Source information: Conditions: 150 mM KOAc, 10 mM MgCl2 and 150 mM bicine (pH 8.5), 24 C. Structure probing data (2A3 and DMS) for a 177-nucleotide construct. 2A3 adducts were read by reverse transcription with SuperScript II with manganese. The 2A3 profile rests on 987 reads. DMS adducts were read by reverse transcription with MarathonRT. High 2A3 reactivity points to a flexible backbone, as in loops and unpaired stretches. The data come from the RNA Mapping Database (RMDB), library RFMREP. High DMS reactivity at an A or C suggests that its Watson-Crick edge is free.

RNA sequence: GGGAACGACUCGAGUAGAGUCGAAAAUGUAAAGAUAAAGGAUAACUCGGUUGGGAUUGCGUUCUGUAAUGGACGCAUGAACCAGGAAUUCCUAGUAGUCGCGUGUCACUAACGGGCGACGACUGCGCUAUGAAUACGGCUUCGGCCGUAUUCAUAGAAAAGAAACAACAACAACAAC
Reactivity to 2A3 in 0.01 (KOAc 150mM, MgCl2 10mM, bicine 150mM(pH8.5), 24C), signal-to-noise 2, nucleotides 027 to 126: u200g000u040a030a040a160g080a160u150a180a120a060g010g000a000u020a080a040c030u030c190g000g080u080u080g240g020g000a050u010u080g000c010g000u020u000c030u030g060u070a070a160u260g000g010a000c000g000c000a000u000g080a010a000c000c000a000g030g000a010a100u030u000c010c000u030a030g020u000a010g000u010c020g000c120g070u070g070u110c010a020c200u080a230a060c090g020g030g000c000g000a100c000g010a010c010u030g010c010g020
Reactivity to DMS in 0.01 (KOAc 150mM, MgCl2 10mM, bicine 150mM(pH8.5), 24C), signal-to-noise 2, nucleotides 027 to 126: u010g020u020a060a140a180g010a140u020a050a120a210g000g010a030u000a140a220c040u000c060g000g010u000u000g010g020g000a110u000u000g000c010g010u010u000c070u000g000u010a080a050u000g020g000a000c010g010c010a000u010g000a060a060c000c000a070g030g020a120a100u010u000c000c010u000a070g050u000a000g010u000c000g020c010g020u000g030u010c000a090c100u030a090a120c210g010g000g010c020g000a030c010g020a000c000u000g000c040g010